[RMDB]
RNA sequence: GGGAACGACUCGAGUAGAGUCGAAAAAUCCUGUGUCAGCAUUUGUGGACGGAAUGCGUGUCAGACAAGCAUUUGACCAGGCUGCAUACAAUGAGUCUCUCAGUGGGUUUAAGGAAAUUGCGGCAAGCAUCGGGUACCAGUUCGCUGGUACCCGAUGAAAAGAAACAACAACAACAAC
Reactivity to 2A3 in 0.01 (KOAc 150mM, MgCl2 10mM, bicine 150mM(pH8.5), 24C), signal-to-noise 4, nucleotides 027 to 126: a000u040c020c000u030g030u050g030u090c050a030g010c030a100u030u110u180g170u160g000g040a060c060g090g040a040a020u090g000c040g030u040g100u040c070a060g010a230c070a110a040g000c010a010u030u010u150g010a050c030c030a040g030g020c010u010g020c020a040u020a060c030a010a260u100g010a000g070u010c020u000c010u000c080a060g040u090g010g120g000u050u110u090a140a110g040g030a060a070a110u120u060g000c000g040g000c040a030a000g040
Reactivity to DMS in 0.01 (KOAc 150mM, MgCl2 10mM, bicine 150mM(pH8.5), 24C), signal-to-noise 4, nucleotides 027 to 126: a110u000c010c010u010g010u000g000u010c000a070g010c040a060u000u000u050g020u000g020g050a130c050g020g020a050a020u000g000c010g000u010g010u010c180a090g020a230c090a100a080g020c060a120u000u010u010g000a090c020c070a120g000g030c010u000g020c070a060u010a050c140a070a100u030g010a050g010u010c050u000c030u000c040a030g020u020g010g000g020u010u010u020a090a110g000g000a070a080a120u020u000g040c060g020g000c060a110a060g010

Structure probing data (2A3 and DMS) for a 177-nucleotide construct. For DMS, 5,158 sequencing reads were counted. The data come from the RNA Mapping Database (RMDB), library OK1LIB. Values cover nucleotides 27 to 126. For 2A3 the reverse transcriptase was SuperScript II with manganese. 2A3 is a SHAPE reagent: it acylates the 2'-hydroxyl of flexible nucleotides of all four kinds.